Chemical mapping of a 177-nucleotide RNA with DMS and 2A3. For 2A3, 1,178 sequencing reads were counted. DMS adducts were read by reverse transcription with MarathonRT. The reactions ran in a buffer of 150 mM KOAc, 10 mM MgCl2 and 150 mM bicine (pH 8.5), at 24 C. It was measured as part of the RMDB libraries RFM100 and RFMREP.
RNA sequence: GGGAACGACUCGAGUAGAGUCGAAAAAAAACGGGACCUCUGUUGAGGUAUAACCAAUAUUCCGUACUAAGGAUUUCGGUCCGGAACGUCUAGAGACUACACGGCAGACCAAUUUUGUGGUGGUAUGAGUAUGCUUAGUCUUCGGACUAAGCAUACUAAAAGAAACAACAACAACAAC
Reactivity to DMS in 0.01 (KOAc 150mM, MgCl2 10mM, bicine 150mM(pH8.5), 24C), signal-to-noise 3, nucleotides 027 to 126: a080a020a080a020c070g000g020g010a060c000c000u000c020u020g030u010u020g020a020g000g010u020a010u020a050a150c090c050a040a030u040a100u030u020c010c000g000u000a040c140u020a160a090g010g020a040u000u000u010c170g000g030u010c020c000g000g010a070a050c150g000u020c040u000a110g000a100g010a050c060u010a070c110a030c060g000g010c090a010g000a100c070c070a060a040u040u010u010u010g020u010g000g010u000g000g000u000a070u000g000
Reactivity to 2A3 in 0.01 (KOAc 150mM, MgCl2 10mM, bicine 150mM(pH8.5), 24C), signal-to-noise 3, nucleotides 027 to 126: a010a010a030a000c000g030g000g000a000c020c000u000c030u080g240u300u300g050a000g000g010u030a060u050a040a030c050c020a000a000u140a070u170u090c000c000g010u030a070c060u090a020a050g040g000a020u000u000u140c110g060g000u010c010c000g030g000a020a010c020g000u010c000u030a150g010a010g000a150c010u020a000c040a000c020g020g030c010a020g030a080c020c070a050a090u010u030u050u090g110u010g030g080u060g010g050u090a110u210g040